Record summary
The record gives the reactivity of an RNA of 177 nucleotides to DMS and 2A3. 2A3 adducts were read by reverse transcription with SuperScript II with manganese. Reactivities are given for positions 27 through 126. It was measured as part of the RMDB library RFM100. For DMS, 1,381 sequencing reads were counted.
[RMDB]
RNA sequence: GGGAACGACUCGAGUAGAGUCGAAAACAUGCUCCCAAGAAAAACUUCUAAGCUUCAGGUAUAAGGUACCUGUACCGUAAACCGACACAGGUAGUCGAGGAGAGUAUCCUCAGGCGCUCGAGUGAUUAAAGUUUACACCAUUCGUGGUGUAAACUUUAAAAGAAACAACAACAACAAC
Reactivity to DMS in 0.01 (KOAc 150mM, MgCl2 10mM, bicine 150mM(pH8.5), 24C), signal-to-noise 1, nucleotides 027 to 126: c280a110u040g000c090u000c000c030c020a070a170g050a040a090a010a130a030c050u040u000c040u000a070a180g000c060u000u040c020a050g020g030u000a040u000a110a100g010g000u010a040c070c050u000g010u020a120c040c020g070u000a000a030a000c090c010g010a110c070a080c040a160g000g020u000a000g030u020c030g000a040g070g000a090g000a210g020u060a030u000c000c070u000c080a140g020g010c030g000c030u000c050g000a040g000u030g000a140u010u030
Reactivity to 2A3 in 0.01 (KOAc 150mM, MgCl2 10mM, bicine 150mM(pH8.5), 24C), signal-to-noise 3, nucleotides 027 to 126: c030a040u100g010c010u000c020c010c020a020a040g060a010a070a040a000a000c100u120u080c010u090a070a020g030c010u040u060c040a020g030g070u020a110u030a130a050g100g000u000a040c000c020u020g030u050a050c010c020g090u100a050a020a120c040c030g110a020c000a010c000a080g030g070u120a060g040u140c030g000a030g000g050a040g010a000g030u120a010u060c000c000u010c000a030g040g020c020g020c000u060c050g100a040g020u060g040a060u040u030